Structure probing data (DMS) for a 177-nucleotide construct. The reactions ran in a buffer of 150 mM KOAc, 10 mM MgCl2 and 150 mM bicine (pH 8.5), at 24 C. It was measured as part of the RMDB library OK2TRN.

[RMDB]
RNA sequence: GGGAACGACUCGAGUAGAGUCGAAAAGGAGGGGUUGGAGCGGCCGCCGUCCGACGAGGACUUUGCAGGAUGGCCGGACGCGCCUUUGCUGAUGAGAGCUGCGCCGCUGCCCUACCAGCAGCUGGAGAUGGAGUCACAGAUUCGUCUGUGACUCCAUAAAAGAAACAACAACAACAAC
Reactivity to DMS in 0.01 (KOAc 150mM, MgCl2 10mM, bicine 150mM(pH8.5), 24C), signal-to-noise 2, nucleotides 027 to 126: g000g020a130g020g020g010g020u000u000g000g010a070g030c030g010g010c030c030g010c020c020g030u000c010c000g010a160c140g030a090g000g000a110c150u000u000u010g000c210a140g000g000a040u000g010g000c080c070g000g000a030c020g010c030g020c030c020u000u010u000g030c080u000g020a090u000g010a120g000a100g020c030u010g010c080g000c000c040g000c040u010g000c010c000c010u010a100c080c060a270g000c040a030g020c030u010g000g000a130g000